RNA sequence: GGGAACGACUCGAGUAGAGUCGAAAAUUGAGCCUUUAACAUAUGCAUUUCGUCCAUCUGCUUUUUUAAGGCACUGCUCCUUUUUGUCCAUUACUGAUACGCAUGAGCCUGUGUAUGAUGGGUGCAAACCUUACUCCCAAUUCGUUGGGAGUAAGGUAAAAGAAACAACAACAACAAC
Reactivity to DMS in 0.01 (KOAc 150mM, MgCl2 10mM, bicine 150mM(pH8.5), 24C), signal-to-noise 7, nucleotides 027 to 126: u000u000g010a100g020c020c030u000u000u000a060a060c200a060u000a040u000g010c030a070u000u010u000c130g010u010c090c060a030u000c060u000g000c010u000u000u000u000u000u000a030a020g010g010c010a090c080u000g010c080u010c020c030u010u010u000u000u000g000u000c030c030a070u010u010a120c160u000g010a070u000a040c060g020c030a030u010g010a090g020c110c090u000g000u000g010u000a030u000g010a020u000g000g000g000u010g000c150a050a060
Reactivity to 2A3 in 0.01 (KOAc 150mM, MgCl2 10mM, bicine 150mM(pH8.5), 24C), signal-to-noise 6, nucleotides 027 to 126: u070u050g030a030g030c020c020u050u050u060a120a040c090a080u130a040u180g010c030a040u030u080u130c120g080u010c070c010a040u010c030u020g030c050u030u150u020u020u030u160a030a020g010g010c010a020c040u040g000c020u060c020c000u060u090u040u080u130g060u030c020c010a040u050u070a100c060u100g060a050u020a090c040g010c030a030u120g070a020g090c010c030u050g020u000g010u040a030u070g050a010u020g000g000g040u030g030c010a060a060
Conditions: 150 mM KOAc, 10 mM MgCl2 and 150 mM bicine (pH 8.5), 24 C.
An RNA of 177 nucleotides, treated with DMS and 2A3 and read out base by base.
DMS (dimethyl sulfate) methylates the pairing face of unpaired adenines and cytosines.
For DMS, 11,049 sequencing reads were counted.
Values cover nucleotides 27 to 126.
Source: RMDB library OK2TRN, as collected in RNAgym.